[RMDB]
RNA sequence: GGGAACGACUCGAGUAGAGUCGAAAAUGAAUACACCAGUAUAUCCUGUUCCUAAACCUGAUGGAAGAUGGAGAAUGGUAUUAGAUUAUAGAGAAGUAAACAAAACUAUUCCUUUAACAGCAGCCCAUACGGUACAAUUUUUCGAAAUUGUACCGUAAAAAGAAACAACAACAACAAC
Reactivity to 2A3 in 0.01 (KOAc 150mM, MgCl2 10mM, bicine 150mM(pH8.5), 24C), signal-to-noise 2, nucleotides 027 to 126: u100g020a060a020u080a050c050a040c020c030a000g050u090a090u000a000u140c000c010u050g070u050u050c010c010u090a240a070a170c010c090u080g080a030u120g040g010a030a030g050a180u120g020g010a010g050a100a080u010g010g000u010a050u030u080a070g030a050u030u110a070u100a090g070a030g030a260a000g050u100a010a210a090c080a010a170a030a060c040u050a100u080u090c020c010u100u060u040a050a010c040a010g080c010a000g030c000c010c020a030
Reactivity to DMS in 0.01 (KOAc 150mM, MgCl2 10mM, bicine 150mM(pH8.5), 24C), signal-to-noise 2, nucleotides 027 to 126: u000g000a130a060u000a060c110a070c110c040a070g000u020a090u000a140u000c040c000u000g000u010u010c000c000u000a050a100a080c190c110u000g000a070u000g020g000a040a090g010a050u010g000g000a090g020a100a060u020g010g010u000a070u000u000a090g000a160u010u000a050u010a080g010a120g010a100a120g010u000a020a050a100c080a060a040a080a070c040u000a050u000u010c010c040u000u000u000a040a080c070a070g000c020a090g020c050c020c030a100